The record gives the reactivity of an RNA of 177 nucleotides to DMS and 2A3.
The RNA was probed in 150 mM KOAc, 10 mM MgCl2 and 150 mM bicine (pH 8.5) at 24 C.
Values cover nucleotides 27 to 126.
RNA sequence: GGGAACGACUCGAGUAGAGUCGAAAAUACGUGACCUUCGGGUCACGUAACCGGCGUUCCCAAGUCAAAAAGAGAGACGCAAUCUCGACAGCGCCCUUUUCGUAUGAGUUGCUUUCGAGCAACUCAACCGUUCAGAAGAGUUCGCUCUUCUGAACGGAAAAGAAACAACAACAACAAC
Reactivity to DMS in 0.01 (KOAc 150mM, MgCl2 10mM, bicine 150mM(pH8.5), 24C), signal-to-noise 1, nucleotides 027 to 126: u000a000c000g000u000g000a000c000c000u010u000c170g040g090g050u000c000a000c030g000u000a010a030c040c010g000g000c030g010u010u000c000c000c030a100a140g010u050c190a000a060a060a060a110g040a170g010a080g000a020c080g000c140a100a170u010c040u000c100g000a030c190a070g010c020g000c010c010c020u000u000u000u010c070g030u000a080u020g040a000g010u000u010g010c000u000u000u000c150g060a020g060c000a000a010c000u000c000a020a050
Reactivity to 2A3 in 0.01 (KOAc 150mM, MgCl2 10mM, bicine 150mM(pH8.5), 24C), signal-to-noise 1, nucleotides 027 to 126: u040a000c000g000u000g010a010c000c000u000u030c240g080g000g000u000c020a000c000g000u000a010a010c010c020g080g040c020g020u020u010c000c020c040a000a000g110u070c040a080a010a060a100a050g100a000g020a010g000a040c040g000c120a070a100u020c000u030c080g060a050c030a030g020c020g040c000c000c010u010u080u060u160c090g070u140a110u200g010a020g000u000u000g000c000u010u070u170c220g030a010g000c000a000a000c000u010c000a000a010